[RMDB]
Overview: Structure probing data (2A3) for a 207-nucleotide construct. For 2A3, 577 sequencing reads were counted. Values cover nucleotides 27 to 156.

RNA sequence: GGGAACGACUCGAGUAGAGUCGAAAAGGUCUGCAGGUUCAGGGAAACACACUGACGCUCCGUCUGUCCAACCCCCUGCGCAUCUCCAACGGAGCGCUGAGUCUGCACAUAGACUCGGGACGCGCCCUGUCCGUUAGCAACGACGGUCGCGUCGGGGCUUCUUGGCAUGAUUCGUCAUGCCAAGAAGAAAAGAAACAACAACAACAAC
Reactivity to 2A3 in 0.01 (KOAc 150mM, MgCl2 10mM, bicine 150mM(pH8.5), 24C), signal-to-noise 1, nucleotides 027 to 156: g010g050u030c080u060g000c010a000g060g000u060u110c210a030g090g080g040a100a260a000c080a040c120a060c140u090g060a000c040g000c000u000c000c000g020u090c050u080g160u110c040c010a090a110c140c050c010c000c000u080g000c060g000c010a080u070c050u050c090c000a050a030c060g000g000a010g020c010g000c020u020g000a000g000u030c030u010g070c050a000c010a080u140a050g020a000c010u010c000g000g060g000a010c000g030c020g020c000c000c040u070g000u040c050c030g050u090u020a010g030c060a010a030c000g000a000c000g000g010u000c000g000c030g020u030c000g020g000g000g010